[RMDB]
The record gives the reactivity of an RNA of 177 nucleotides to DMS. The RNA was probed in 150 mM KOAc, 10 mM MgCl2 and 150 mM bicine (pH 8.5) at 24 C. It was measured as part of the RMDB library M2PK90. For DMS, 770 sequencing reads were counted.

RNA sequence: GGGAACGACUCGAGUAGAGUCGAAAAUACAAGAAGGGGGGACGGAGAAGGCUAUGUUGGCCGGGCGACGGUUGUCCCGGUUAAAGCGUGUAGGCUGGUUUUCCAGGCAAAUCCGGAAGAAAAUGAAAGUACUGUACCAGUUCGCUGGUACAGUACUAAAAGAAACAACAACAACAAC
Reactivity to DMS in 0.01 (KOAc 150mM, MgCl2 10mM, bicine 150mM(pH8.5), 24C), signal-to-noise 1, nucleotides 027 to 126: u000a070c180a090a090g040a150a120g020g020g000g000g020g000a100c030g010g020a050g010a080a060g000g000c020u060a080u000g000u010u000g030g030c040c010g000g000g000c300g000a070c170g020g020u000u010g020u020c010c000c050g010g000u000u010a030a020a070g010c040g000u000g000u010a050g000g040c020u010g000g010u000u020u010u000c030c050a090g000g000c030a030a040a090u000c020c010g000g000a080a090g000a090a100a100a130u000g020a070a070